Chemical mapping of a 177-nucleotide RNA with 2A3 and DMS.
[RMDB]
RNA sequence: GGGAACGACUCGAGUAGAGUCGAAAAGAUAUGGAACCCAAGGGAGCGACUCGGAAACGAGAUCGCGAGGAUCUUGUGGUUCCUAAGUCAAAAGUUAACACGUCCGCUUCGGCGGACGUGUUAACAAGACUUCACUAUAGUUCGCUAUAGUGAAGUCAAAAGAAACAACAACAACAAC
Reactivity to 2A3 in 0.01 (KOAc 150mM, MgCl2 10mM, bicine 150mM(pH8.5), 24C), signal-to-noise 2, nucleotides 027 to 126: g010a000u060a040u140g000g000a000a000c000c000c000a000a000g030g020g010a020g000c000g000a010c000u000c010g020g010a070a060a070c010g010a000g040a180u020c010g000c000g010a090g000g000a010u010c010u020u100g120u290g070g000u000u010c000c000u010a070a000g030u020c020a040a070a060a070g010u000u000a000a000c000a000c040g000u010c020c030g040c060u080u090c230g120g020c000g000g050a000c010g000u000g000u000u000a000a000c000a000a000
Reactivity to DMS in 0.01 (KOAc 150mM, MgCl2 10mM, bicine 150mM(pH8.5), 24C), signal-to-noise 3, nucleotides 027 to 126: g000a070u010a300u010g000g000a020a010c000c000c000a020a020g000g000g000a030g020c000g000a010c000u000c000g000g000a130a070a170c000g000a030g010a080u000c010g030c010g000a020g010g020a020u010c000u000u000g000u010g020g010u000u000c000c010u000a010a040g010u020c030a070a090a120a160g000u000u020a010a010c000a000c000g000u000c000c020g010c000u000u010c210g030g020c000g010g000a000c000g030u000g000u000u000a000a000c000a070a090
For 2A3 the reverse transcriptase was SuperScript II with manganese. For 2A3, 7,291 sequencing reads were counted.